[RMDB]
Structure probing data (DMS and 2A3) for a 207-nucleotide construct. For 2A3 the reverse transcriptase was SuperScript II with manganese. It was measured as part of the RMDB library OK3TST.
RNA sequence: GGGAACGACUCGAGUAGAGUCGAAAAGUUCUGUACUGGGUAAUGCCUUCCAAAUGUCAUAGCCUAGAAGUUCUGAAACGAAUGGACUGUGAGAAAUUUGAGGAAGUAGUGGUUUCACUUCUGGGUGUUGUGGGCUUUCUGAUUUCUAGAACCUGAAGAUGGCAUUAGUAUUCGUACUAAUGCCAUCAAAAGAAACAACAACAACAAC
Reactivity to DMS in 0.01 (KOAc 150mM, MgCl2 10mM, bicine 150mM(pH8.5), 24C), signal-to-noise 1, nucleotides 027 to 156: g000u000u000c020u020g010u000a130c030u000g020g040g000u010a120a040u010g020c000c020u000u000c070c080a040a080a160u000g000u000c040a020u010a140g000c020c020u010a070g020a160a140g000u000u000c070u000g000a090a090a110c010g020a140a200u000g000g010a040c020u040g010u010g020a130g000a080a090a120u000u020u000g000a180g000g020a090a090g000u000a100g010u000g010g020u000u000u000c090a060c070u000u000c030u000g020g000g020u000g010u020u010g000u000g000g000g000c050u010u000u000c040u000g010a180u010u000u000c050u020a090g010a020a080c060c020u010g010a060a240
Reactivity to 2A3 in 0.01 (KOAc 150mM, MgCl2 10mM, bicine 150mM(pH8.5), 24C), signal-to-noise 1, nucleotides 027 to 156: g030u050u030c050u160g060u090a100c020u030g030g000g030u070a040a030u110g010c020c000u030u010c100c020a140a120a160u190g060u070c080a080u120a070g020c030c000u070a070g020a070a020g020u100u000c100u130g070a080a060a050c020g030a020a040u070g040g040a030c020u020g030u060g030a040g120a040a190a160u070u170u150g070a020g050g020a020a000g000u070a010g060u000g130g010u050u000u020c010a030c020u040u010c010u030g000g000g070u050g000u040u040g000u010g010g030g040c010u100u090u000c030u060g090a100u000u050u050c020u050a010g030a050a040c000c050u080g100a050a020